[RMDB]
RNA sequence: GGGAACGACUCGAGUAGAGUCGAAAAGUACAGGUAACUUACGAUGUCGGAAACACUUUACCGUGGCCCUAAGCAAUGGAGAUGACACUUCAGGGAGGCUUCACUCUGCAGAGAACUCUCCCCCGUCGCGUGGCGGGCUGGAUUACGAUCGCGGAGGCCAAACAAUCACCUUCGGGUGAUUGUUUGGAAAAGAAACAACAACAACAAC
Reactivity to 2A3 in 0.01 (KOAc 150mM, MgCl2 10mM, bicine 150mM(pH8.5), 24C), signal-to-noise 2, nucleotides 027 to 156: g090u080a020c040a090g070g040u020a120a070c050u100u170a050c110g070a050u130g040u070c030g030g010a020a100a020c060a020c050u040u120u110a080c060c030g010u020g040g000c020c000c000u090a080a010g020c010a020a110u180g020g000a060g010a030u050g030a030c010a000c090u050u010c020a000g030g060g010a040g060g000c020u020u040c040a040c030u000c000u010g000c080a060g020a000g030a050a030c010u010c000u040c040c020c010c020c000g000u000c010g020c120g250u190g030g000c000g000g010g000c050u050g000g010a000u030u150a060c020g000a010u030c020g000c010g010g020a000g040g030

Structure probing data (2A3) for a 207-nucleotide construct. Reactivities are given for positions 27 through 156. For 2A3, 928 sequencing reads were counted. 2A3 adducts were read by reverse transcription with SuperScript II with manganese.